[RMDB]
RNA sequence: GGGAACGACUCGAGUAGAGUCGAAAAGAUGAGAACAUACUGUUCAGUUGGGCCAUCAGGUGACACUCCAAGUCUUGCAGGAGGUCACGAGCAAGAUAAAGAGGACGGCCUGACUUAACAAAAGAAAACCCGUAAUAUGAUUCGUCAUAUUACGGGUAAAAGAAACAACAACAACAAC
Reactivity to DMS in 0.01 (KOAc 150mM, MgCl2 10mM, bicine 150mM(pH8.5), 24C), signal-to-noise 6, nucleotides 027 to 126: g010a070u010g000a120g040a100a050c090a080u030a090c180u010g000u000u000c050a020g010u000u000g000g000g000c000c000a110u010c040a140g010g020u030g010a050c130a300c000u000c010c010a040a300g000u020c030u010u000g010c030a110g020g010a120g010g000u010c080a040c040g010a140g010c060a010a030g010a040u010a020a270a140g000a040g000g010a050c090g000g010c000c000u000g000a000c010u000u000a030a020c010a050a080a090a100g010a090a060a050
Reactivity to 2A3 in 0.01 (KOAc 150mM, MgCl2 10mM, bicine 150mM(pH8.5), 24C), signal-to-noise 9, nucleotides 027 to 126: g140a070u250g030a040g060a130a020c040a050u220a090c060u040g000u010u010c010a000g000u000u000g000g000g000c010c000a030u030c050a060g150g070u040g040a020c100a100c170u000c000c010a110a090g080u050c090u120u210g080c080a060g010g050a020g010g060u040c020a010c030g010a040g010c030a090a020g010a120u180a110a080a020g110a050g090g060a030c030g010g000c000c000u000g000a000c000u000u000a000a000c010a000a060a020a010g140a020a090a010
An RNA of 177 nucleotides, treated with DMS and 2A3 and read out base by base.
For DMS, 14,323 sequencing reads were counted.
The reactions ran in a buffer of 150 mM KOAc, 10 mM MgCl2 and 150 mM bicine (pH 8.5), at 24 C.
For DMS the reverse transcriptase was MarathonRT.
The 2A3 profile rests on 19,508 reads.